Conditions: 150 mM KOAc, 10 mM MgCl2 and 150 mM bicine (pH 8.5), 24 C. Chemical mapping of a 207-nucleotide RNA with 2A3 and DMS. It was measured as part of the RMDB library RNAMAK.

[RMDB]
RNA sequence: GGGAACGACUCGAGUAGAGUCGAAAAGUGCGUUCGCGCACGACUAACCGUAGGACGUGAAGAGCGAAGAACAUACACUAAGCCACCUUCGAAAGAGGGUGGUAUGUGUAUGGGAGCUUGGAGGCGUCCUAAACGGAACAAAGCCCUUCGGGGCUAAAUUAAGGGGAAAGUUCGCUUUCCCCUUAAUAAAAGAAACAACAACAACAAC
Reactivity to 2A3 in 0.01 (KOAc 150mM, MgCl2 10mM, bicine 150mM(pH8.5), 24C), signal-to-noise 2, nucleotides 027 to 156: g010u000g010c000g020u030u180c280g020c000g050c120a000c010g030a010c000u080a120a050c010c010g020u010a040g010g000a000c000g080u220g020a040a010g000a030g020c000g110a210a020g030a030a020c000a010u010a000c000a000c010u070a200a020g000c000c010a010c000c000u010u000c020g030a080a050a050g010a010g020g000g010u000g000g000u000a010u030g000u000g000u000a000u000g020g000g000a030g010c010u010u010g000g050a090g300g000c010g000u020c000c000u000a000a000a000c010g000g020a030a060c050a140a070a070g000c000c020c000u000u060c130g040g000g000g000c000u050a040a090
Reactivity to DMS in 0.01 (KOAc 150mM, MgCl2 10mM, bicine 150mM(pH8.5), 24C), signal-to-noise 2, nucleotides 027 to 156: g020u000g010c010g020u000u000c270g050c010g010c010a010c000g030a130c000u000a070a190c020c000g020u010a070g020g010a040c000g000u000g020a300a300g000a050g000c010g020a090a150g000a090a140c010a010u000a000c000a010c000u000a130a290g000c010c000a020c010c000u000u000c020g000a240a140a250g010a020g020g000g030u010g010g040u000a000u000g030u010g020u000a000u000g000g000g000a250g020c000u010u040g030g000a300g020g010c010g020u000c000c010u000a000a040a060c020g010g050a140a040c070a030a090a120g000c010c010c000u000u000c180g040g000g010g020c010u000a000a010
For 2A3, 1,668 sequencing reads were counted.